Structure probing data (DMS and 2A3) for a 177-nucleotide construct. DMS adducts were read by reverse transcription with MarathonRT. Values are in units of 0.01, from 0 to 300, in steps of 10. It was measured as part of the RMDB library RFM100. In probing experiments dimethyl sulfate is read out at A N1 and C N3, which are open when not base-paired. Conditions: 150 mM KOAc, 10 mM MgCl2 and 150 mM bicine (pH 8.5), 24 C.
[RMDB]
RNA sequence: GGGAACGACUCGAGUAGAGUCGAAAAAGGACCUGAGAGGAGCCGAUGUUCCGUCGUACGUUUUGAAAAACGAGCCAGGGAGUGUGCCUGUUUGACGAGUCUAACCGGAGUAUCCGGGAAGGCGUAGCUCGUAUCGACGCUUCGGCGUCGAUACGAGAAAAGAAACAACAACAACAAC
Reactivity to DMS in 0.01 (KOAc 150mM, MgCl2 10mM, bicine 150mM(pH8.5), 24C), signal-to-noise 1, nucleotides 027 to 126: a150g000g000a070c000c010u020g000a110g000a130g010g000a040g000c040c020g010a110u020g000u010u000c010c010g000u020c040g000u010a030c120g000u000u000u000u030g040a040a000a060a100a070c040g040a080g000c030c000a080g030g000g000a070g000u000g090u000g000c050c000u000g000u010u000u000g040a150c070g000a110g000u000c000u000a040a250c050c000g000g000a260g000u070a030u050c000c000g000g000g030a120a040g000g000c000g000u000a140g020
Reactivity to 2A3 in 0.01 (KOAc 150mM, MgCl2 10mM, bicine 150mM(pH8.5), 24C), signal-to-noise 1, nucleotides 027 to 126: a040g040g000a000c000c000u010g000a010g030a050g070g000a040g110c090c000g030a030u100g000u050u000c070c000g040u000c010g010u010a050c080g010u040u000u080u040g190a180a130a000a000a000c000g000a020g020c030c040a110g000g050g000a150g000u010g020u070g100c010c040u060g130u040u090u130g020a000c040g000a000g000u000c000u110a080a070c000c000g040g000a150g050u250a100u110c000c000g000g050g000a000a140g000g000c000g000u000a020g000